[RMDB]
RNA sequence: GGGAACGACUCGAGUAGAGUCGAAAAUUAAGAAUGACGGCAAACGGCCUGGACGUUCGGCAAUCUUCACCAAUACUGAGGAUUACUGGUGUGCGGCGUAUCCCCCAAGCGCCCCGCCAGGCAAGGUUUUGCCAUUACCAUUCGUGGUAAUGGCAAAAAAAGAAACAACAACAACAAC
Reactivity to DMS in 0.01 (KOAc 150mM, MgCl2 10mM, bicine 150mM(pH8.5), 24C), signal-to-noise 2, nucleotides 027 to 126: u050u000a040a160g050a070a090u080g000a110c130g000g010c020a060a000a040c000g000g000c050c000u000g000g010a070c120g000u010u010c030g000g000c060a080a000u000c010u000u020c020a010c140c070a000a160u040a120c300u010g000a020g000g000a090u000u000a070c050u000g000g000u010g000u080g040c140g010g010c020g000u000a020u060c030c000c000c010c030a170a300g020c010g010c020c000c000c010g040c030c000a010g000g000c110a090a050g010g020u000
Reactivity to 2A3 in 0.01 (KOAc 150mM, MgCl2 10mM, bicine 150mM(pH8.5), 24C), signal-to-noise 2, nucleotides 027 to 126: u080u020a020a030g090a080a100u120g010a040c070g000g000c010a090a140a000c060g070g000c000c000u010g020g090a000c010g000u080u140c050g020g050c030a030a000u000c000u000u000c000a060c100c030a010a090u080a150c030u030g020a090g000g000a030u010u080a080c000u000g000g000u020g020u030g030c100g010g050c030g010u090a210u260c000c000c020c000c000a020a030g010c000g000c000c000c000c000g000c000c000a000g000g000c030a030a070g030g030u050

This 177-nucleotide RNA was probed chemically with DMS and 2A3.
The DMS profile rests on 2,262 reads.
The reactions ran in a buffer of 150 mM KOAc, 10 mM MgCl2 and 150 mM bicine (pH 8.5), at 24 C.
High 2A3 reactivity points to a flexible backbone, as in loops and unpaired stretches.